[RMDB]
RNA sequence: GGGAACGACUCGAGUAGAGUCGAAAAUUAAAGGAGGAGGAGAAUUCCAGCGCGCGCUCGGUCCUCCCACGCGCGGCGGGCGCUGGAAUUCGCGCGCGGAGGAUGAUUAAUAGAUAGCGCGCAAAAACAUACGGAGAUAGUUCGCUAUCUCCGUAUGAAAAGAAACAACAACAACAAC
Reactivity to DMS in 0.01 (KOAc 150mM, MgCl2 10mM, bicine 150mM(pH8.5), 24C), signal-to-noise 3, nucleotides 027 to 126: u010u010a070a100a090g010g000a060g010g020a070g000g010a100g000a030a030u000u000c000c010a020g000c010g000c000g000c000g030c010u000c010g010g010u000c060c060u000c030c030c030a060c180g010c120g010c190g010g000c020g000g000g020c020g010c010u000g000g000a010a010u000u010c030g010c030g000c000g010c080g030g020a100g000g010a060u010g000a150u010u000a060a090u010a120g000a130u010a120g010c010g020c000g020c020a030a040a070a040a120
Reactivity to 2A3 in 0.01 (KOAc 150mM, MgCl2 10mM, bicine 150mM(pH8.5), 24C), signal-to-noise 1, nucleotides 027 to 126: u130u030a050a020a060g070g010a010g000g000a010g050g030a040g010a090a010u020u010c000c000a030g010c000g000c020g010c000g010c020u080c080g070g080u070c010c020u040c000c000c050a010c030g020c020g030c040g000g020c000g000g090g020c000g000c020u000g010g000a000a000u000u000c000g000c010g000c010g000c030g010g040a040g200g040a020u110g030a060u120u300a100a110u070a170g110a070u090a060g010c010g000c000g000c000a010a010a010a000a010
Structure probing data (DMS and 2A3) for a 177-nucleotide construct. Conditions: 150 mM KOAc, 10 mM MgCl2 and 150 mM bicine (pH 8.5), 24 C. The data come from the RNA Mapping Database (RMDB), library M2PK90.